[RMDB]
RNA sequence: GGGAACGACUCGAGUAGAGUCGAAAAUCUUUGCGCUUCGGCGCAAAGAAAACGCCUGCUGCUCCGUGACCCGUGCGUGAGACCGUCGGUCCAGCCCGCCGAAAACUAUGGUGUUCGCACCAUAGAACAAUAAUGUGUCCUUCGGGACACAUUAUUGAAAAGAAACAACAACAACAAC
Reactivity to DMS in 0.01 (KOAc 150mM, MgCl2 10mM, bicine 150mM(pH8.5), 24C), signal-to-noise 3, nucleotides 027 to 126: u010c000u010u000u000g000c000g040c000u010u010c180g020g020c000g010c010a000a000a000g000a030a030a110a150c170g000c030c000u000g020c040u010g000c010u020c010c040g000u010g000a120c080c030c060g000u010g010c060g020u000g000a110g010a080c040c020g010u000c050g020g010u000c020c030a110g000c030c020c020g020c080c070g000a050a060a090a180c010u000a000u010g010g010u000g010u010u020c200g000c000a000c000c000a000u000a010g000a120a130
Reactivity to 2A3 in 0.01 (KOAc 150mM, MgCl2 10mM, bicine 150mM(pH8.5), 24C), signal-to-noise 2, nucleotides 027 to 126: u010c010u010u000u020g000c000g030c020u050u090c300g110g000c000g000c010a010a000a010g010a010a030a000a000c030g050c010c010u070g060c020u020g030c000u040c020c000g050u020g050a050c020c000c050g050u040g020c030g010u120g030a100g040a130c000c000g190u140c080g020g000u020c020c010a020g000c000c010c000g060c010c030g100a080a080a010a020c010u020a010u010g000g030u000g040u050u080c230g020c050a010c000c000a010u000a020g010a020a000

This 177-nucleotide RNA was probed chemically with DMS and 2A3. It was measured as part of the RMDB library M2PK50. The 2A3 profile rests on 2,578 reads.